[RMDB]
RNA sequence: GGGAACGACUCGAGUAGAGUCGAAAACAUGUACCCUUCGGGGUACAUGAACAUAACGCGGGCGUGCGACACCGCCGGAGCUAGCCUCAGAUAGUCCCAGUAUUAGGUGCGCCUUCGGGCGCACCAACCAUUGAGGCUGUUUCGACAGCCUCAAUGGAAAAGAAACAACAACAACAAC
Reactivity to 2A3 in 0.01 (KOAc 150mM, MgCl2 10mM, bicine 150mM(pH8.5), 24C), signal-to-noise 1, nucleotides 027 to 126: c000a010u000g010u000a000c000c000c000u000u070c210g060g020g000g000u010a010c000a000u000g000a000a000c050a110u260a080a000c090g000c030g090g000g000c040g060u050g010c020g060a070c100a030c080c070g080c000c010g000g010a020g030c020u030a020g030c000c000u000c000a050g010a300u090a040g040u000c000c000c000a010g080u070a170u160u280a040g000g000u000g000c000g000c020c010u020u100c220g070g030g000c040g000c000a000c000c000a010a000
Reactivity to DMS in 0.01 (KOAc 150mM, MgCl2 10mM, bicine 150mM(pH8.5), 24C), signal-to-noise 2, nucleotides 027 to 126: c000a000u000g010u000a000c000c000c000u000u010c170g020g030g000g010u000a010c000a000u000g000a080a040c170a080u030a050a080c140g030c100g000g000g010c080g010u000g020c120g010a060c090a110c080c010g040c040c060g010g000a110g010c020u000a090g010c030c020u010c040a050g000a080u000a100g020u000c000c010c000a130g010u010a090u010u010a070g000g010u000g000c000g000c010c000u000u000c230g080g010g000c020g040c000a000c000c000a020a040